This 207-nucleotide RNA was probed chemically with 2A3. The reactions ran in a buffer of 150 mM KOAc, 10 mM MgCl2 and 150 mM bicine (pH 8.5), at 24 C. It was measured as part of the RMDB library OK3TST. 2A3 adducts were read by reverse transcription with SuperScript II with manganese.

RNA sequence: GGGAACGACUCGAGUAGAGUCGAAAACAAUCACAGAGAUGGACAAGGACCUCAGACAAGGCACAGAAGAGGGGCUGGUCAGACAGCCCGAGUCAGUAACCAAGCGGACAGACUACAAGGCUCUGCCUACAGGACAUGGGGGCUCUUCAAGGGAGGAGAGUUUUAAAUCGUUCGCGAUUUAAAACUCAAAAGAAACAACAACAACAAC
Reactivity to 2A3 in 0.01 (KOAc 150mM, MgCl2 10mM, bicine 150mM(pH8.5), 24C), signal-to-noise 1, nucleotides 027 to 156: c000a010a100u140c030a020c050a070g030a000g030a050u070g030g010a020c000a020a050g000g000a070c010c010u060c040a040g030a080c030a110a050g010g010c010a030c010a080g060a050a000g020a070g030g020g000g000c000u010g030g020u050c010a000g020a210c000a010g000c000c060c090g000a010g010u050c050a020g020u050a040a060c020c000a100a010g030c040g080g010a050c000a030g030a000c030u050a050c140a050a020g020g010c010u000c010u100g050c000c000u040a080c060a020g000g000a030c030a080u070g070g000g000g030g020c000u000c000u030u100c060a040a010g030g030g010a020g040g010a050